[RMDB]
RNA sequence: GGGAACGACUCGAGUAGAGUCGAAAAAUCAGAGGGCGCUAUCAUGCAAACUAGGAUUGUCUGCUCAUGCCCAGAACCAACUACCGAUAACUAACAGUGCAUGAAGGUUAGUUAUUCCAUAUUAAUUAAAACUCGUAAUUCUUCGGAAUUACGAGAACACCAGUCUUGCGUUCGCGCAAGACUGGUGAAAAGAAACAACAACAACAAC
Reactivity to 2A3 in 0.01 (KOAc 150mM, MgCl2 10mM, bicine 150mM(pH8.5), 24C), signal-to-noise 1, nucleotides 027 to 156: a000u070c040a050g040a240g120g000g000c080g000c120u050a060u180c090a010u070g000c050a150a010a090c070u070a070g120g070a020u080u100g060u090c030u080g010c050u000c000a030u250g000c000c020c000a050g040a070a040c030c000a050a060c070u120a050c020c100g000a000u000a070a000c000u000a000a000c050a000g010u000g210c010a010u040g060a020a050g060g000u000u000a000g000u000u000a000u030u000c000c000a040u060a110u190u300a120a070u190u140a000a110a030a030c000u020c000g010u010a000a000u000u010c040u000u020c100g110g000a000a000u000u000a020c000g000a010g000a000a000
Source: RMDB library M2RFOK, as collected in RNAgym.
Chemical mapping of a 207-nucleotide RNA with 2A3.
The RNA was probed in 150 mM KOAc, 10 mM MgCl2 and 150 mM bicine (pH 8.5) at 24 C.
For 2A3 the reverse transcriptase was SuperScript II with manganese.